[RMDB]
RNA sequence: GGGAACGACUCGAGUAGAGUCGAAAAUCCUCACGUUUCGACGUGAGGAGAACUCAAGCAAGGGAAGGGAACCCUCGGGAAGGGCUCCCAAGGCGAUCUCAACAAGGGCCAAAUUCGUUUGGCCCAACUUCUGUAGUAGCUUCGGCUACUACAGAAGAAAAGAAACAACAACAACAAC
Reactivity to DMS in 0.01 (KOAc 150mM, MgCl2 10mM, bicine 150mM(pH8.5), 24C), signal-to-noise 1, nucleotides 027 to 126: u000c000c000u010c000a000c000g000u010u000u000c190g010a020c000g010u020g000a000g000g000a000g000a050a080c000u000c020a110a120g000c050a120a050g010g000g000a130a160g000g000g000a020a070c060c000c000u000c070g040g040g010a200a040g050g020g010c040u000c030c000c010a080a020g030g030c030g010a170u000c030u000c070a130a130c160a080a080g050g020g010c010c000a020a000a030u000u000c150g010u000u000u000g010g010c000c000c020a000a020
Reactivity to 2A3 in 0.01 (KOAc 150mM, MgCl2 10mM, bicine 150mM(pH8.5), 24C), signal-to-noise 1, nucleotides 027 to 126: u010c000c000u000c000a020c020g020u030u060u140c200g140a020c000g000u000g010a000g000g000a000g020a030a010c040u000c080a000a110g050c000a030a120g040g000g070a100a060g000g010g010a020a030c010c060c000u050c050g140g010g050a060a020g080g010g000c010u020c000c000c000a000a000g000g010c000g020a080u030c020u010c060a000a180c040a100a200g010g000g000c010c000a010a000a030u120u130c210g070u020u020u000g030g000c010c000c000a010a020